[RMDB]
RNA sequence: GGGAACGACUCGAGUAGAGUCGAAAAGCAGUUGCGUGAAAUGGAAAACCUACGCCUGGAAAGUCAGCAGUUAAUAGAGAAAAACUGGCUCCUGCAAGGUCAGCUGGAUGAUAUUAAAAGACAAAAGAUAGCAUAGCAUUUUCGAAUGCUAUGCUAUAAAAGAAACAACAACAACAAC
Reactivity to 2A3 in 0.01 (KOAc 150mM, MgCl2 10mM, bicine 150mM(pH8.5), 24C), signal-to-noise 1, nucleotides 027 to 126: g080c020a040g020u090u040g100c040g020u090g010a080a100a100u110g050g030a070a100a010a070c000c000u000a030c060g000c000c030u070g010g070a120a070a000g000u080c030a020g000c050a000g040u110u170a190a150u160a160g100a020g020a030a170a000a000a070c020u020g010g000c000u000c000c000u030g060c040a050a070g000g020u040c020a000g050c000u050g080g000a060u100g020a020u010a000u080u260a160a100a000a000g070a010c040a040a130a020a000g110
Reactivity to DMS in 0.01 (KOAc 150mM, MgCl2 10mM, bicine 150mM(pH8.5), 24C), signal-to-noise 4, nucleotides 027 to 126: g000c030a040g010u000u000g020c040g020u000g020a050a090a120u010g010g020a130a070a120a140c140c020u000a080c110g010c050c020u000g030g000a080a080a100g000u010c040a060g000c080a080g010u000u010a060a070u010a090g020a100g010a070a120a050a090a060c040u000g000g000c000u010c040c040u000g000c170a100a090g000g010u010c040a030g000c020u000g000g000a120u030g000a080u000a050u000u000a020a070a100a090g010a060c100a050a070a110a090g000
This 177-nucleotide RNA was probed chemically with 2A3 and DMS. For DMS, 2,374 sequencing reads were counted. The RNA was probed in 150 mM KOAc, 10 mM MgCl2 and 150 mM bicine (pH 8.5) at 24 C. For DMS the reverse transcriptase was MarathonRT. It was measured as part of the RMDB library OK2TRN.